[RMDB]
This 207-nucleotide RNA was probed chemically with 2A3 and DMS.
The data come from the RNA Mapping Database (RMDB), library RNAMAK.
The 2A3 profile rests on 3,497 reads.
As a SHAPE reagent, 2A3 marks flexible, mostly unpaired nucleotides at the ribose 2'-OH.
Values cover nucleotides 27 to 156.
RNA sequence: GGGAACGACUCGAGUAGAGUCGAAAACACUUGUUUCGACAAGUGAACUAGUCCUAAGUCCACCCGUUUGACGGACAUGCUCCUGGGACUCGGAAACGAGUCCCGCGAGCAACAGCCCGAGGGUGGAUAUGGAGUCGUACAACGCUUCGGCGUUGAAGCGAAGGAAAUAAUUCGUUAUUUCCUUCGCAAAAGAAACAACAACAACAAC
Reactivity to 2A3 in 0.01 (KOAc 150mM, MgCl2 10mM, bicine 150mM(pH8.5), 24C), signal-to-noise 3, nucleotides 027 to 156: c000a000c000u020u000g030u050u180u120c150g130a040c020a000a010g000u010g010a030a030c020u080a090g150u010c010c000u040a130a030g030u000c000c000a000c000c020c010g050u100u260u210g150a110c030g000g010a020c010a050u040g000c000u000c000c030u040g010g000g000a000c000u000c000g000g080a090a070a090c010g000a000g000u000c010c010c000g000c030g010a000g020c000a000a020c030a010g020c020c010c020g010a080g000g000g000u000g000g000a000u000a010u020g020g000a020g050u140c100g040u130a080c020a030a000c020g000c010u050u140c300g100g020c020g010u020u040g050a090a030
Reactivity to DMS in 0.01 (KOAc 150mM, MgCl2 10mM, bicine 150mM(pH8.5), 24C), signal-to-noise 2, nucleotides 027 to 156: c000a020c040u000u000g020u000u000u010c230g000a090c000a020a010g020u000g010a040a100c080u000a120g020u000c010c000u020a080a250g020u000c000c000a030c010c000c010g030u010u000u000g030a190c140g020g030a000c000a300u010g000c000u000c010c020u000g000g010g000a020c000u000c000g020g000a160a100a240c020g010a020g010u000c020c000c010g030c120g000a040g000c000a060a040c060a160g030c000c000c020g020a150g010g040g050u000g000g010a010u000a050u010g010g020a120g010u000c010g000u000a160c010a020a010c000g010c010u000u020c270g040g010c040g000u000u010g020a070a260